This 207-nucleotide RNA was probed chemically with DMS and 2A3. The reactions ran in a buffer of 150 mM KOAc, 10 mM MgCl2 and 150 mM bicine (pH 8.5), at 24 C. Reactivities are given for positions 27 through 156. It was measured as part of the RMDB library OK3TST. 2A3 adducts were read by reverse transcription with SuperScript II with manganese. The 2A3 profile rests on 846 reads.
RNA sequence: GGGAACGACUCGAGUAGAGUCGAAAAAAGGCUCAGAGUGAAUGGCUAUUAGCCUAAGGUUACUCAGCUAGUGAUAUAGGAGUUAAGAAGAAAUUAUUUAGGCAGAUAGUGAGGGUACUGGAGUCCUCAGAAAGGUUUUCCUUUUAAUGAAAAGCAACUGCGAUUUAAUAUUCGUAUUAAAUCGCAGAAAAGAAACAACAACAACAAC
Reactivity to DMS in 0.01 (KOAc 150mM, MgCl2 10mM, bicine 150mM(pH8.5), 24C), signal-to-noise 1, nucleotides 027 to 156: a060a070g030g000c000u000c070a160g000a060g010u000g000a100a100u010g000g020c010u010a090u000u000a170g010c000c020u010a030a030g010g020u000u020a050c020u000c040a120g010c080u000a090g010u000g000a130u010a140u000a070g040g010a120g000u000u000a050a080g010a100a170g010a010a050a140u000u000a120u010u000u010a080g060g000c030a170g000a070u000a030g010u010g010a100g000g010g010u000a050c040u010g010g030a080g030u000c020c030u010c030a130g010a010a040a030g010g000u000u040u000u000c020c010u010u000u000u040a040a110u030g000a080a070a050a110g020c050a070a270
Reactivity to 2A3 in 0.01 (KOAc 150mM, MgCl2 10mM, bicine 150mM(pH8.5), 24C), signal-to-noise 2, nucleotides 027 to 156: a000a000g010g010c020u040c010a020g010a000g070u050g030a100a040u070g010g000c020u060a100u080u090a070g000c000c000u010a030a000g070g010u040u040a020c010u040c050a010g060c030u030a020g030u010g110a060u080a010u060a110g040g000a030g020u100u130a040a040g030a060a030g080a000a030a130u180u110a050u090u070u000a010g070g010c000a000g030a050u090a030g080u100g010a000g050g040g010u020a030c020u030g010g010a020g000u040c010c020u020c010a030g130a010a040a050g050g000u000u030u040u090c060c000u110u060u050u140a030a070u160g030a020a030a070a010g130c020a020a030